An RNA of 207 nucleotides, treated with 2A3 and read out base by base.
Values cover nucleotides 27 to 156.
Conditions: 150 mM KOAc, 10 mM MgCl2 and 150 mM bicine (pH 8.5), 24 C.
Reactivities are rounded to 0.1 and cut off at 0 and 3.
Source: RMDB library M2RFPK, as collected in RNAgym.
The 2A3 profile rests on 924 reads.
RNA sequence: GGGAACGACUCGAGUAGAGUCGAAAAAGCGUAGCGGUACGCCGCUACGCAAGGCGCAUUUGAACUGUAUUGCACGCCUUGCAUAAAGCAAAAGUACUAAAAAAACGUGCCGUUACGACGGCACGAAAAAACAUCCAUUGGUUCGCCAAUGGAUGAAUCUGUAUCCGUAGUUCGCUACGGAUACAGAAAAAGAAACAACAACAACAAC
Reactivity to 2A3 in 0.01 (KOAc 150mM, MgCl2 10mM, bicine 150mM(pH8.5), 24C), signal-to-noise 2, nucleotides 027 to 156: a000g010c000g000u000a000g000c010g010g010u040a020c190g060c000c000g000c000u000a010c000g040c000a000a000g000g000c000g030c010a080u060u120u260g070a220a180c110u100g100u300a120u090u080g020c030a050c060g030c000c000u000u030g000c010a100u100a240a100a000g000c040a000a050a100a050g120u120a090c150u290a000a040a030a000a080a080a060c000g000u000g040c000c000g000u010u030a100c290g010a000c010g050g040c000a000c000g020a010a010a000a000a000a000c000a000u000c000c000a000u000u000g060g000u030u020c180g000c080c000a000a010u000g030g000a000u000g000a000a020